[RMDB]
RNA sequence: GGGAACGACUCGAGUAGAGUCGAAAACGUGUAAGUUCUUCUCGGUUCUUAGUGGUGGAUACGGCUGUCAAAGGAUGCGGGUGUGACGGGGGUAUUUAUAAAUAGGAGCUCCUUGCGAGGUGGCACGCCAUGCUGGAUGUUUCGACAUCCAGCAUGGAAAAGAAACAACAACAACAAC
Reactivity to DMS in 0.01 (KOAc 150mM, MgCl2 10mM, bicine 150mM(pH8.5), 24C), signal-to-noise 2, nucleotides 027 to 126: c100g000u040g020u010a130a140g010u020u000c020u020u000c040u030c020g010g000u010u010c060u010u020a060g070u000g020g030u030g000g000a100u000a050c110g000g000c060u000g000u010c170a080a080a070g000g030a050u020g000c010g000g000g010u000g000u020g030a040c000g020g000g000g010g020u000a000u030u030u060a080u000a040a020a080u040a040g010g000a030g000c010u000c060c060u000u030g040c060g020a000g000g000u010g040g010c020a090c090g050